[RMDB]
RNA sequence: GGGAACGACUCGAGUAGAGUCGAAAAGAAAGAAAGAAGGCAAGUGAUGUCUGUUCUCACGAUGGUCUUCAGAUGUCCUCUAGGGCACUGCUGAGACAGCCAGUUGACAAAGCUGAUGCCAUAAAAACCCGGAAUCUUAAUUCGUUAAGAUUCCGGGAAAAGAAACAACAACAACAAC
Reactivity to DMS in 0.01 (KOAc 150mM, MgCl2 10mM, bicine 150mM(pH8.5), 24C), signal-to-noise 3, nucleotides 027 to 126: g000a150a050a070g000a040a100a110g000a080a050g010g010c010a110a120g020u030g000a150u020g010u000c010u000g010u020u010c010u020c060a070c150g000a100u020g010g010u000c020u010u000c050a000g000a150u020g000u030c050c020u010c170u050a130g010g000g020c010a070c070u000g020c130u000g040a150g010a060c030a020g000c030c070a070g020u000u000g000a030c070a050a120a190g000c010u010g000a080u030g000c000c020a110u020a040a060a060a050a040
Reactivity to 2A3 in 0.01 (KOAc 150mM, MgCl2 10mM, bicine 150mM(pH8.5), 24C), signal-to-noise 4, nucleotides 027 to 126: g040a010a030a020g090a050a070a000g100a050a090g050g000c030a040a020g060u050g100a050u070g020u020c030u060g110u100u050c080u020c020a030c090g060a060u080g020g040u050c090u060u010c010a010g020a170u010g000u000c000c030u090c090u230a250g000g010g010c060a040c040u040g020c040u110g030a040g010a080c020a010g080c030c030a040g040u090u070g020a020c000a010a100a000g010c000u010g030a100u070g020c010c010a020u110a050a150a010a020a030